[RMDB]
RNA sequence: GGGAACGACUCGAGUAGAGUCGAAAACUCUGAGUCUUCGGACUCAGAGAAACGCUUUCGACUCUGUUACCAACAAACGCGAGUUUGUUGGUAUAAUCGCAAAAAGGUGGGAGUUCGCUCCCACCAAGUAUUAACUGUCCUUCGGGACAGUUAAUACAAAAGAAACAACAACAACAAC
Reactivity to DMS in 0.01 (KOAc 150mM, MgCl2 10mM, bicine 150mM(pH8.5), 24C), signal-to-noise 3, nucleotides 027 to 126: c000u000c000u000g000a020g010u000c000u000u020c150g030g010a020c010u000c000a000g000a010g000a030a040a080c300g000c210u000u000u000c000g010a010c000u000c010u020g000u000u000a000c000c000a000a010c000a000a000a000c000g000c290g000a270g000u000u000u000g000u000u000g020g010u000a000u000a050a060u000c030g010c270a070a080a090a070a070g000g010u000g010g010g000a030g010u000u010c240g000c000u000c000c000c000a010c010c000a000a020
Reactivity to 2A3 in 0.01 (KOAc 150mM, MgCl2 10mM, bicine 150mM(pH8.5), 24C), signal-to-noise 1, nucleotides 027 to 126: c000u010c000u000g010a000g000u000c000u020u130c260g090g000a000c010u010c010a000g000a000g000a010a010a000c080g020c110u000u020u010c010g000a010c000u000c010u010g050u040u020a000c000c010a000a000c000a000a000a010c050g000c020g030a040g050u000u000u010g000u000u000g000g020u000a000u010a000a010u010c010g000c040a020a020a030a070a130g000g000u000g010g000g010a020g010u020u050c150g070c060u000c010c010c000a010c010c000a000a000